Description: Chemical mapping of a 207-nucleotide RNA with DMS and 2A3.

[RMDB]
RNA sequence: GGGAACGACUCGAGUAGAGUCGAAAACUCCCCUCGCCAUUCCUUCGAGGGGGUUCACACCCCCAACUCGCGGGCCGGCUGUUCUUCUUUCCCUUCUCUCGUCUUCCUCGGUCAACCUCUUAAGUUCCUCUUCUUCUUCCUUGCUGAGGUUCUUCCCCUUAAUGAUAAGCUUCGGCUUAUCAUUAAGAAAAGAAACAACAACAACAAC
Reactivity to DMS in 0.01 (KOAc 150mM, MgCl2 10mM, bicine 150mM(pH8.5), 24C), signal-to-noise 2, nucleotides 027 to 156: c070u010c020c010c000c050u000c030g010c070c010a170u010u000c030c040u000u000c100g000a190g000g010g090g040g030u000u000c130a140c150a300c050c020c010c020c030a080a070c060u010c070g020c080g030g010g030c090c060g040g020c040u020g000u000u000c030u010u010c030u000u000u010c020c010c020u000u010c000u000c030u000c070g000u000c050u010u000c020c010u000c050g000g010u000c040a070a090c060c010u010c030u000u000a080a130g020u000u010c010c020u000c040u000u000c020u000u000c030u000u000c020c010u010u000g010c020u000g000a140g010g020u000u000c030u000u000c010c030c060
Reactivity to 2A3 in 0.01 (KOAc 150mM, MgCl2 10mM, bicine 150mM(pH8.5), 24C), signal-to-noise 2, nucleotides 027 to 156: c060u100c000c000c000c000u010c020g040c000c010a110u120u100c010c020u030u050c020g030a050g000g000g000g050g000u200u190c080a080c000a040c010c000c030c010c010a040a070c060u040c080g030c030g000g060g000c020c010g050g050c020u000g050u070u030c030u030u030c000u030u070u020c010c010c020u090u030c050u010c010u000c000g050u000c010u080u050c010c000u000c010g000g050u040c020a040a090c010c010u050c020u140u070a090a040g020u090u050c000c020u010c010u050u000c000u050u000c020u040u060c040c000u020u060g020c040u040g010a030g040g000u030u020c000u020u040c000c010c000
The 2A3 profile rests on 2,125 reads. The RNA was probed in 150 mM KOAc, 10 mM MgCl2 and 150 mM bicine (pH 8.5) at 24 C.